An RNA of 207 nucleotides, treated with DMS and 2A3 and read out base by base. Reactivities are given for positions 27 through 156. Source: RMDB library M2RFPK, as collected in RNAgym. For 2A3, 2,111 sequencing reads were counted. Conditions: 150 mM KOAc, 10 mM MgCl2 and 150 mM bicine (pH 8.5), 24 C. For 2A3 the reverse transcriptase was SuperScript II with manganese. For DMS, 2,094 sequencing reads were counted. For DMS the reverse transcriptase was MarathonRT.

[RMDB]
RNA sequence: GGGAACGACUCGAGUAGAGUCGAAAAGAAAUUACGUUUCCUUUACACUUCUCAAACCGGGCUCAAGAGAAGCAAAGCAUCCCUCAUAUCCACGAUGGAGGGUGUCGUGGAGUAUACUGUACCAAAAAGAGCGAACACGGCUUCGGCCGUGUUCGAACUAGGAGAUGUUGUUCGCAACAUCUCCUAGAAAAGAAACAACAACAACAAC
Reactivity to DMS in 0.01 (KOAc 150mM, MgCl2 10mM, bicine 150mM(pH8.5), 24C), signal-to-noise 1, nucleotides 027 to 156: g000a030a050a140u010u010a080c130g020u000u000u000c020c020u000u000u000a040c070a080c020u010u000c020u000c000a020a120a090c040c020g060g060g000c040u000c120a090a300g000a070g020a030a000g070c020a060a100a130g000c070a060u000c000c000c020u030c040a070u010a060u000c070c070a040c030g010a090u000g000g040a100g030g010g000u000g020u010c030g020u010g050g000a050g020u010a110u020a100c080u020g000u000a250c060c040a050a040a060a050a080g020a180g030c020g000a020a000c020a020c010g020g030c000u000u010c300g070g040c000c000g010u000g010u010u000c000g000a010a020
Reactivity to 2A3 in 0.01 (KOAc 150mM, MgCl2 10mM, bicine 150mM(pH8.5), 24C), signal-to-noise 3, nucleotides 027 to 156: g040a000a070a020u230u110a040c060g010u010u030u050c020c000u010u020u070a060c050a020c020u040u030c020u030c030a040a080a110c060c030g070g000g010c050u050c100a130a000g000a000g020a040a010g020c070a030a060a010g040c020a060u030c010c010c000u070c040a070u080a040u090c000c020a010c010g000a020u040g040g110a040g040g020g010u040g000u000c010g000u000g010g010a030g000u020a010u020a070c100u100g070u150a090c020c010a030a060a010a090a020g060a040g080c030g000a000a000c000a000c000g000g000c000u050u040c140g070g000c000c000g000u000g010u000u000c000g000a010a020